Structure probing data (2A3 and DMS) for a 207-nucleotide construct. For DMS, 3,095 sequencing reads were counted. For 2A3 the reverse transcriptase was SuperScript II with manganese. For DMS the reverse transcriptase was MarathonRT.

RNA sequence: GGGAACGACUCGAGUAGAGUCGAAAAUUUAUUCAAGAGAAUCAGAAGCAAAUAGCCAAUGCUUUUAAUAAUGCCAUGAGUAACAUUACCAAUGCUUUUGAGAAUGUUAAUAGUGCGUUGCAGCAUACAAGUGAUGGCUUAAAAACAGUGGCACAGGACGGUGCUACUGUUUCGACAGUAGCACCGUAAAAGAAACAACAACAACAAC
Reactivity to 2A3 in 0.01 (KOAc 150mM, MgCl2 10mM, bicine 150mM(pH8.5), 24C), signal-to-noise 3, nucleotides 027 to 156: u070u030u050a090u070u080c040a060a000g050a000g060a090a130u110c060a020g050a090a010g020c040a030a080a110u130a060g020c010c030a000a040u040g000c040u050u090u060u070a180a150u200a030a010u160g010c040c000a020u020g050a020g180u050a010a020c000a020u050u050a160c000c010a030a030u090g040c120u290u170u070u060g090a140g000a010a070u050g000u020u010a010a030u040a120g040u020g010c020g060u070u130g050c030a000g000c010a000u020a060c050a080a030g020u100g130a040u020g010g000c000u030u070a000a020a000a000a010c020a020g050u030g110g000c040a010c000a030g180g040
Reactivity to DMS in 0.01 (KOAc 150mM, MgCl2 10mM, bicine 150mM(pH8.5), 24C), signal-to-noise 2, nucleotides 027 to 156: u000u000u000a060u040u000c040a030a110g010a240g000a110a180u000c030a070g030a080a060g010c050a030a070a110u010a150g020c030c030a080a070u000g000c010u020u000u000u000a080a080u000a110a080u000g020c010c030a110u000g020a180g020u000a030a010c020a040u000u000a030c050c000a000a100u000g110c160u000u010u010u020g000a060g000a030a030u010g000u010u000a060a060u010a110g020u000g000c030g000u020u000g000c210a120g000c040a030u010a130c130a030a140g010u010g000a020u000g000g030c020u010u000a020a010a070a050a010c060a070g010u000g020g040c000a060c050a130g030g000